Structure probing data (2A3) for a 207-nucleotide construct. The RNA was probed in 150 mM KOAc, 10 mM MgCl2 and 150 mM bicine (pH 8.5) at 24 C. It was measured as part of the RMDB library M2RFPK. Values are in units of 0.01, from 0 to 300, in steps of 10.

RNA sequence: GGGAACGACUCGAGUAGAGUCGAAAAGAAAGAAAGAAAGAACUCUGUAAAGUGAGGGAUUGCCUGGACCAGGUUGGCGGGCCUGCUCCAGUUUCCUUCGCUCUGCUCAACGGGCAGACCGCCACAAAAAACGCGUGGCUGUUCGCAGCCACGCGAAGAUACGUCUUACGUUCGCGUAAGACGUAUCAAAAGAAACAACAACAACAAC
Reactivity to 2A3 in 0.01 (KOAc 150mM, MgCl2 10mM, bicine 150mM(pH8.5), 24C), signal-to-noise 2, nucleotides 027 to 156: g060a000a080a010g070a030a110a020g030a040a110a020g040a040a040c040u090c040u120g090u190a140a120a050g010u020g010a000g050g020g000a070u070u270g100c010c000u010g000g000a020c030c020a000g000g000u030u010g030g050c010g000g010g000c000c000u010g010c000u000c000c000a000g000u020u110u010c010c000u050u050c010g010c030u020c000u020g000c000u010c050a170a170c110g030g020g000c010a010g000a060c010c010g010c000c000a040c020a000a160a010a000a000a020c000g000c000g010u010g000g000c010u000g040u000u120c250g000c050a000g000c000c000a000c010g040c000g000a000a010